[RMDB]
RNA sequence: GGGAACGACUCGAGUAGAGUCGAAAAUCCUUUAUUUACAGCAAAACAAAGACCAACAUAUCCACACACCAAACUGUUUGAUUCACAUCACACCCAAAUACAAACGGUUUAAAAAAGAGGAUGCUUUAUUCAUAUACACCUUCGGGUGUAUAUGAAUAAAAGAAACAACAACAACAAC
Reactivity to DMS in 0.01 (KOAc 150mM, MgCl2 10mM, bicine 150mM(pH8.5), 24C), signal-to-noise 1, nucleotides 027 to 126: u020c020c000u000u050u050a100u020u000u110a140c190a090g080c090a050a030a170a060c060a020a120a150g020a030c010c060a070a010c130a120u030a180u040c000c000a050c020a090c120a030c060c060a060a010a050c070u000g020u000u010u010g040a050u020u010c140a000c060a010u040c040a020c120a060c020c010c000a060a100a010u000a110c050a010a000a000c060g010g000u000u000u000a000a000a110a030a000a000g000a010g010g000a010u000g000c070u000u060u000
Reactivity to 2A3 in 0.01 (KOAc 150mM, MgCl2 10mM, bicine 150mM(pH8.5), 24C), signal-to-noise 4, nucleotides 027 to 126: u020c000c000u030u170u020a210u020u090u140a110c060a020g040c020a060a020a060a040c020a040a120a000g030a040c010c020a010a050c070a070u030a020u080c030c010a030c000a010c010a010c070c030a010a010a040c020u010g030u050u010u020g050a080u050u080c040a030c000a090u090c000a040c000a040c050c020c010a030a110a000u170a120c020a000a040a010c020g010g030u030u050u090a110a070a020a010a000a010g090a060g050g040a020u060g000c010u010u000u010
Structure probing data (DMS and 2A3) for a 177-nucleotide construct. High DMS reactivity at an A or C suggests that its Watson-Crick edge is free. Values cover nucleotides 27 to 126.